Conditions: 150 mM KOAc, 10 mM MgCl2 and 150 mM bicine (pH 8.5), 24 C.
The record gives the reactivity of an RNA of 177 nucleotides to DMS.
For DMS the reverse transcriptase was MarathonRT.
The DMS profile rests on 822 reads.
RNA sequence: GGGAACGACUCGAGUAGAGUCGAAAAAGAAUCUCCUUCGGGAGAUUCUGAACCACUAAGCUGAUUGCGGAUGACGACGAGGCUGCUCGUGUCGAGCAACCACCGAGAACAGGUUCGCCUGUUCUAAAUGUGGGUGGGUAUUCGUACCCACCCACAUAAAAGAAACAACAACAACAAC
Reactivity to DMS in 0.01 (KOAc 150mM, MgCl2 10mM, bicine 150mM(pH8.5), 24C), signal-to-noise 1, nucleotides 027 to 126: a040g000a020a010u000c000u000c010c000u010u020c230g040g020g010a000g000a000u000u000c010u000g000a080a190c030c000a120c280u000a120a090g000c090u000g000a030u000u010g020c020g010g010a150u030g020a070c020g000a050c040g010a040g010g050c140u020g010c010u010c020g000u000g000u000c010g000a180g000c020a020a020c020c010a020c140c060g000a050g000a000a010c010a000g010g010u000u000c230g010c000c000u000g000u000u010c020u010a040a060